[RMDB]
RNA sequence: GGGAACGACUCGAGUAGAGUCGAAAAUGUGGAUUUAGAUUUAAAUGUUUUAUGCCAUUGAGUCUAGAUAGUGACCUUACAAUGUACCUUAGAGACAAGGCGCUGUCACCUGUCAGAAAUGAGUGGGAUAAUGCACGUGAUUCGUCACGUGCAUUAUAAAAGAAACAACAACAACAAC
Reactivity to 2A3 in 0.01 (KOAc 150mM, MgCl2 10mM, bicine 150mM(pH8.5), 24C), signal-to-noise 2, nucleotides 027 to 126: u110g000u040g060g090a050u010u060u100a030g000a020u060u090u070a100a180a020u040g120u020u120u110u120a080u240g080c030c010a010u030u010g000a000g040u010c010u020a050g000a060u010a010g050u100g110a300c010c020u030u020a040c070a100a180u100g040u100a100c000c000u080u110a110g020a010g000a160c030a080a010g040g000c020g030c040u010g010u040c000a020c020c030u060g070u080c010a020g060a070a070a030u050g040a040g030u100g000g000g000
Reactivity to DMS in 0.01 (KOAc 150mM, MgCl2 10mM, bicine 150mM(pH8.5), 24C), signal-to-noise 5, nucleotides 027 to 126: u010g030u010g010g010a080u000u000u000a020g010a030u000u000u000a050a040a040u010g010u010u000u010u020a090u030g020c240c010a030u000u000g000a030g010u000c010u000a040g000a030u010a040g010u000g010a110c020c070u000u000a080c140a080a100u010g010u000a120c030c040u010u010a100g010a160g010a080c110a060a040g000g010c030g000c060u000g000u000c060a150c020c030u000g010u000c020a050g000a060a060a090u000g010a060g020u000g000g000g000
An RNA of 177 nucleotides, treated with 2A3 and DMS and read out base by base. The reactions ran in a buffer of 150 mM KOAc, 10 mM MgCl2 and 150 mM bicine (pH 8.5), at 24 C. 2A3 adducts were read by reverse transcription with SuperScript II with manganese. Values cover nucleotides 27 to 126. The 2A3 profile rests on 1,855 reads. It was measured as part of the RMDB library OK2TRN.